This 177-nucleotide RNA was probed chemically with 2A3.
The reactions ran in a buffer of 150 mM KOAc, 10 mM MgCl2 and 150 mM bicine (pH 8.5), at 24 C.

RNA sequence: GGGAACGACUCGAGUAGAGUCGAAAAAUAUAACACGAUUUUUGUGAACUUGUCAUCGCUAUGAUGACUGGUAAAACGAUAUUGCCUUAUUCACAUCGUAAGAAUUCGUCCAGAUGACACUAUCUCCGCAAUGGGAUGCUUUCGAGCAUCCCAUUGCAAAAGAAACAACAACAACAAC
Reactivity to 2A3 in 0.01 (KOAc 150mM, MgCl2 10mM, bicine 150mM(pH8.5), 24C), signal-to-noise 2, nucleotides 027 to 126: a000u080a000u050a020a040c040a000c030g140a080u010u060u000u140u210g010u000g100a030a070c060u020u030g000u000c000a000u000c000g020c190u100a150u300g000a000u000g000a000c000u010g000g020u060a030a040a000a000c090g050a020u010a110u080u050g000c010c010u030u110a090u050u030c010a030c000a030u030c000g010u000a110a000g030a140a070u040u030c060g060u000c030c000a040g020a130u110g060a080c070a030c080u080a080u120c050u050c020c040